[RMDB]
RNA sequence: GGGAACGACUCGAGUAGAGUCGAAAAUCUUCCUUCUCAACAGUCCGACGAUGUUUCCCAGCCAGGGGUUUUCAUCCUCAAGUUUCUUGAUCUUCUUGUUGGAUCGCCGGAGAUCCUUCUCGAGCAGUAAGUCAAAACUUCGGUUUUGACAAAAGAAACAACAACAACAAC
Reactivity to 2A3 in 0.01 (KOAc 150mM, MgCl2 10mM, bicine 150mM(pH8.5), 24C), signal-to-noise 4, nucleotides 027 to 129: u000c020u060u060c010c000u030u030c060u010c030a080a150c040a050g080u020c040c010g020a070c020g020a060u080g030u000u030u030c000c000c000a000g040c040c020a040g010g040g020g000u040u050u030u090c050a090u050c000c010u030c020a050a040g010u010u000u040c010u030u070g060a070u010c000u050u010c010u030u080g000u030u030g040g000a030u020c030g010c050c020g050g000a070g010a030u000c010c000u050u000c070u020c020g020a010g010c020a010g050u130a160a000
Reactivity to DMS in 0.01 (KOAc 150mM, MgCl2 10mM, bicine 150mM(pH8.5), 24C), signal-to-noise 5, nucleotides 027 to 129: u000c070u000u000c000c000u030u000c060u000c060a150a180c160a120g050u020c020c050g000a140c090g000a110u020g030u070u000u020c000c010c020a170g010c120c080a000g020g020g020g030u020u010u010u050c050a110u040c000c000u040c080a060a100g000u040u050u000c050u060u020g030a090u020c000u010u020c030u010u040g040u040u010g030g030a000u010c070g010c070c040g000g000a100g020a060u010c050c050u030u000c020u020c000g030a080g030c030a080g000u040a060a060

This 170-nucleotide RNA was probed chemically with 2A3 and DMS.
For 2A3, 15,320 sequencing reads were counted.
2A3 adducts were read by reverse transcription with SuperScript II with manganese.
The data come from the RNA Mapping Database (RMDB), library 15KLIB.
For DMS the reverse transcriptase was MarathonRT.